An RNA of 207 nucleotides, treated with 2A3 and DMS and read out base by base. High DMS reactivity at an A or C suggests that its Watson-Crick edge is free. Source: RMDB library OK3TST, as collected in RNAgym. For 2A3 the reverse transcriptase was SuperScript II with manganese.

[RMDB]
RNA sequence: GGGAACGACUCGAGUAGAGUCGAAAAGCAGUUCCAGAGUGUGAGGACUCUGAAACUCGAGGGUAGUAGUCUUCCUCACAAGACGUCUGUGAUUCUGACCCGAGUCAGGAUUACACUACCGACGUACUCGGGUAUGUCAGACUCGAGGAACUGAGGACACAACGAUGUUCUUCGGAACAUCGUUGUGAAAAGAAACAACAACAACAAC
Reactivity to 2A3 in 0.01 (KOAc 150mM, MgCl2 10mM, bicine 150mM(pH8.5), 24C), signal-to-noise 3, nucleotides 027 to 156: g070c010a000g000u000u000c010c000a030g000a040g040u120g020u050g030a080g020g040a060c020u030c030u130g010a120a070a020c010u000c020g000a030g000g060g020u030a050g020u040a030g000u020c020u060u010c040c060u050c030a050c040a000a000g010a000c040g060u110c100u040g010u030g000a010u010u010c010u010g020a010c000c130c150g030a070g010u000c010a000g000g000a010u000u020a000c020a000c000u020a040c000c020g050a090c070g090u130a040c000u010c050g000g050g010u040a080u160g080u020c000a020g030a090c010u000c010g030a170g000g030a010a010c020u020g010a030g010g060a010
Reactivity to DMS in 0.01 (KOAc 150mM, MgCl2 10mM, bicine 150mM(pH8.5), 24C), signal-to-noise 1, nucleotides 027 to 156: g030c000a050g010u000u000c000c030a070g050a100g010u000g040u000g000a210g030g000a150c050u000c030u030g010a000a030a020c020u000c020g020a130g020g010g090u010a050g000u040a120g020u000c040u000u000c020c100u050c050a070c010a080a100g020a130c000g010u010c010u000g040u080g000a020u000u010c060u010g000a050c000c190c120g000a300g030u000c010a100g000g010a060u000u000a050c000a090c080u000a040c030c000g000a140c080g000u000a060c060u000c020g000g020g000u000a120u000g000u000c130a220g000a090c010u000c000g000a080g040g000a040a040c030u000g000a140g000g010a300